[RMDB]
RNA sequence: GGGAACGACUCGAGUAGAGUCGAAAAGAAGGCUCAGUGAAUGCUCGUUGCCAUUGAUCUUCCUCCUUUUUUUGGUAAAGGAUGGGCACACAUGCACAAUCCAAGAAUGAUAAUAUCUAGAGCAUGACAACAUGCUCCCGUUCGCGGGAGCAUGUUGAAAAGAAACAACAACAACAAC
Reactivity to DMS in 0.01 (KOAc 150mM, MgCl2 10mM, bicine 150mM(pH8.5), 24C), signal-to-noise 2, nucleotides 027 to 126: g000a070a100g010g010c130u000c010a060g020u000g050a120a080u000g020c070u000c130g010u020u000g000c050c000a120u000u000g000a080u010c060u000u000c010c040u010c030c010u000u060u040u000u000u060u000g000g010u020a060a040a020g020g000a030u020g010g010g030c040a030c090a050c030a030u000g000c020a050c080a080a050u000c010c030a080a140g010a100a040u010g000a130u000a070a070u020a300u000c060u000a070g000a070g000c030a050u010g000a180
Reactivity to 2A3 in 0.01 (KOAc 150mM, MgCl2 10mM, bicine 150mM(pH8.5), 24C), signal-to-noise 1, nucleotides 027 to 126: g040a030a030g110g000c010u040c100a030g000u040g120a140a060u000g040c030u020c060g110u040u060g040c010c030a030u020u140g100a090u030c000u080u000c020c000u000c030c080u000u010u000u010u000u080u240g220g040u100a090a000a030g040g010a010u060g040g000g030c030a020c000a000c000a020u030g010c030a020c020a010a110u090c040c000a050a020g040a040a120u140g050a030u110a180a070u090a160u060c040u020a030g010a030g070c010a020u020g020a020
Source information:
This 177-nucleotide RNA was probed chemically with DMS and 2A3. The reactions ran in a buffer of 150 mM KOAc, 10 mM MgCl2 and 150 mM bicine (pH 8.5), at 24 C. For DMS the reverse transcriptase was MarathonRT. Values cover nucleotides 27 to 126. It was measured as part of the RMDB library OK2TST.